[RMDB]
RNA sequence: GGGAACGACUCGAGUAGAGUCGAAAAAGGAAAGGAGACAUUCCGAGACACAGGCUUACCGAUGCACUGUUGUUUAUCUUGGGAAGAUAUACUACCAAUAUCAAGAGGUUAGUUCAACCGAAUGAUGAUAAUUGCGAUGUUUCGACAUCGCAAUUAUAAAAGAAACAACAACAACAAC
Reactivity to 2A3 in 0.01 (KOAc 150mM, MgCl2 10mM, bicine 150mM(pH8.5), 24C), signal-to-noise 1, nucleotides 027 to 126: a000g090g010a080a000a010g140g040a090g000a030c020a100u070u060c010c010g000a000g050a020c050a000c000a040g020g000c010u080u110a110c000c090g050a050u140g000c100a070c180u020g000u170u040g040u010u230u040a100u040c030u010u040g000g000g030a050a020g030a030u070a050u050a150c040u020a040c010c100a060a020u100a010u160c010a000a000g000a020g010g000u000u010a000g040u060u160c020a010a020c000c000g000a030a030u050g000a030u020g000
Reactivity to DMS in 0.01 (KOAc 150mM, MgCl2 10mM, bicine 150mM(pH8.5), 24C), signal-to-noise 3, nucleotides 027 to 126: a080g010g010a060a070a070g010g020a120g000a160c160a160u000u000c000c010g010a080g010a030c070a050c040a060g000g010c010u000u000a140c140c150g010a110u000g010c050a110c040u010g000u000u020g010u000u000u010a110u020c030u010u000g000g010g000a070a050g010a130u000a070u000a080c070u000a100c070c030a030a120u000a020u000c040a020a000g010a300g010g000u000u000a090g000u000u000c140a070a040c000c020g010a300a160u000g000a020u000g020